[RMDB]
Background:
This 177-nucleotide RNA was probed chemically with DMS.
RNA sequence: GGGAACGACUCGAGUAGAGUCGAAAAAUUUGUGUAGAGAGGAAAAUGUGGUUCUCCCCCAGGGUCUCCUCCUGGGUUUUUACCCUCUAAGCAACCUGUGGGCAUGCUGGGUUAUUCCUAAGGACUAAGUACCUAAACAGUUCGCUGUUUAGGUACUAAAAGAAACAACAACAACAAC
Reactivity to DMS in 0.01 (KOAc 150mM, MgCl2 10mM, bicine 150mM(pH8.5), 24C), signal-to-noise 3, nucleotides 027 to 126: a100u000u010u000g010u010g010u000a020g000a060g000a050g010g000a040a030a040a040u020g010u010g020g000u000u000c020u000c030c060c010c010c000a040g000g010g000u010c120u020c190c100u010c010c010u010g010g000g010u010u000u000u010u000a070c040c010c000u000c040u010a050a130g000c020a030a060c180c030u000g020u000g010g000g010c050a040u000g000c050u000g010g000g010u000u000a090u000u000c010c010u000a080a090g000g000a110c140u000a090

Record summary: Conditions: 150 mM KOAc, 10 mM MgCl2 and 150 mM bicine (pH 8.5), 24 C.